RNA sequence: GGGAACGACUCGAGUAGAGUCGAAAAUGCUUUGUGUAGCUAUUGUUGCAGCCUCAGAUGCAAUCGAUGCCGAAUCUGUCGCCGCCGCAGCAGCAUCGCUGGCUGUCGUAGCGGAACCAGAAGCCGAUGCACACAGACACUUCGGUGUCUGUGUGCAAAAAGAAACAACAACAACAAC
Reactivity to DMS in 0.01 (KOAc 150mM, MgCl2 10mM, bicine 150mM(pH8.5), 24C), signal-to-noise 1, nucleotides 027 to 126: u000g000c000u020u000u000g000u010g000u000a200g000c000u010a070u000u010g010u040u000g010c030a040g000c030c010u000c150a130g000a060u000g020c040a110a090u000c060g000a080u000g020c110c090g020a100a140u020c060u000g010u010c150g040c050c030g010c050c020g000c080a000g000c070a100g000c000a070u000c090g000c270u000g010g000c000u020g050u000c070g020u000a040g000c010g030g000a030a090c190c110a070g000a030a050g030c040c190g010a140
An RNA of 177 nucleotides, treated with DMS and read out base by base. The reactions ran in a buffer of 150 mM KOAc, 10 mM MgCl2 and 150 mM bicine (pH 8.5), at 24 C. For DMS, 968 sequencing reads were counted. Source: RMDB library OK2TST, as collected in RNAgym.